[RMDB]
RNA sequence: GGGAACGACUCGAGUAGAGUCGAAAAGGGGUCGACUUCCCUGUCUUGGAUUUAUCUUUCUUUUGACGCUCUGAAGCCUCCACGGAGCGAUAAGAAAGAUUGUCAGACAGAUCAGUCGACGGAGGCACCCAAAGUCACAAAGUUCGCUUUGUGACAACCACACGUACUUCUUCGGAAGUACGUGUGGAAAAGAAACAACAACAACAAC
Reactivity to 2A3 in 0.01 (KOAc 150mM, MgCl2 10mM, bicine 150mM(pH8.5), 24C), signal-to-noise 2, nucleotides 027 to 156: g080g000g050g020u020c020g010a000c010u080u080c050c040c000u000g000u000c030u080u200g210g080a100u280u300u140a080u120c020u010u010u040c030u000u070u010u150g190a120c020g000c000u050c000u010g090a160a050g050c010c020u070c030c010a040c080g000g000a020g020c010g000a010u040a000a010g000a010a000a000g000a000u010u040g060u030c020a020g000a000c010a000g010a040u110c050a000g030u010c040g000a000c000g000g030a040g000g080c040a050c000c000c040a080a110a000g010u000c000a000c000a000a020a040g010u070u150c210g040c170u030u040u030g010u010g010a000c000a000a010